[RMDB]
Background: An RNA of 207 nucleotides, treated with 2A3 and DMS and read out base by base.

RNA sequence: GGGAACGACUCGAGUAGAGUCGAAAAUGAGCUCCAGCUCAGAGGAAAGAUGUGUUUGCAUCGGAAUUGACUCCUCAGUGGUCUUUGGGUUCCUGUGAUUUGGGCAUGACACCGGGAACAUAGCUCAGUUUGUAGAUCGCUUUUCUAGAACACAUGAUGGUAAAUUAGUAUUCGUACUAAUUUACCAAAAAGAAACAACAACAACAAC
Reactivity to 2A3 in 0.01 (KOAc 150mM, MgCl2 10mM, bicine 150mM(pH8.5), 24C), signal-to-noise 4, nucleotides 027 to 156: u040g010a000g020c010u060c070c030a030g000c010u010c030a020g010a010g020g030a070a040a040g030a040u030g030u020g040u060u130u300g060c020a010u000c020g020g040a030a060u100u100g030a030c040u010c010c000u040c020a020g020u030g040g030u020c000u100u100u080g080g000g000u010u030c000c000u010g010u010g030a060u030u070u060g050g020g020c050a040u070g030a030c030a020c050c020g020g020g010a020a010c010a030u080a020g010c010u000c050a030g020u030u090u100g060u020a000g010a070u030c040g020c020u050u080u030u030c010u090a020g070a060a000c030a000c020a070u190g030a030
Reactivity to DMS in 0.01 (KOAc 150mM, MgCl2 10mM, bicine 150mM(pH8.5), 24C), signal-to-noise 4, nucleotides 027 to 156: u000g000a050g020c020u000c080c080a150g020c020u010c030a120g000a090g020g000a110a150a160g000a050u010g030u000g030u000u000u010g010c020a060u000c040g010g020a080a130u000u010g020a110c070u000c010c010u010c050a110g040u000g010g020u000c020u010u010u000g020g020g010u010u010c020c000u010g020u020g010a170u000u000u000g020g010g010c060a080u000g020a120c060a090c060c040g020g000g010a040a140c050a090u000a070g010c020u000c020a080g020u000u000u010g000u000a100g010a120u010c060g010c030u000u020u000u000c040u000a090g000a050a070c040a040c060a060u000g010a220
The 2A3 profile rests on 3,144 reads.